Chemical mapping of a 177-nucleotide RNA with DMS and 2A3.
Source: RMDB library OK2TRN, as collected in RNAgym.
DMS adducts were read by reverse transcription with MarathonRT.
2A3 adducts were read by reverse transcription with SuperScript II with manganese.
RNA sequence: GGGAACGACUCGAGUAGAGUCGAAAACUGGCAUGUGCAAAGCAGGCUGUCUCCAAUGAAUUCAUUAUAAAAGUUUACAUCCUGCUUACAACCAUUGUGCAUGUGGUUGAAGAUGGCAUGGAGUGUGCAACACUACGCCGUUCGCGGCGUAGUGUUGAAAAGAAACAACAACAACAAC
Reactivity to DMS in 0.01 (KOAc 150mM, MgCl2 10mM, bicine 150mM(pH8.5), 24C), signal-to-noise 2, nucleotides 027 to 126: c060u010g020g020c040a020u010g030u010g000c030a090a070a030g020c000a030g000g000c090u000g000u000c050u000c030c070a060a090u010g000a100a130u000u010c130a080u000u000a110u010a100a080a130a070g000u000u000u020a030c010a050u000c010c000u000g000c010u000u000a160c040a020a050c030c020a060u010u000g010u010g010c140a010u010g020u000g000g000u010u000g010a090a090g000a110u000g010g010c040a030u000g000g000a060g030u010g020u010g020
Reactivity to 2A3 in 0.01 (KOAc 150mM, MgCl2 10mM, bicine 150mM(pH8.5), 24C), signal-to-noise 2, nucleotides 027 to 126: c010u030g060g000c020a050u020g000u060g060c030a070a040a080g000c010a010g030g000c020u040g010u070c010u040c010c050a030a080u070g060a040a180u190u190c060a050u100u280a160u070a150a090a030a020g060u080u080u020a030c010a030u000c000c020u000g000c000u010u010a050c040a000a020c000c010a030u000u110g090u120g180c040a040u100g010u000g020g030u030u020g010a070a010g100a180u160g040g000c010a010u070g080g030a040g030u100g050u070g050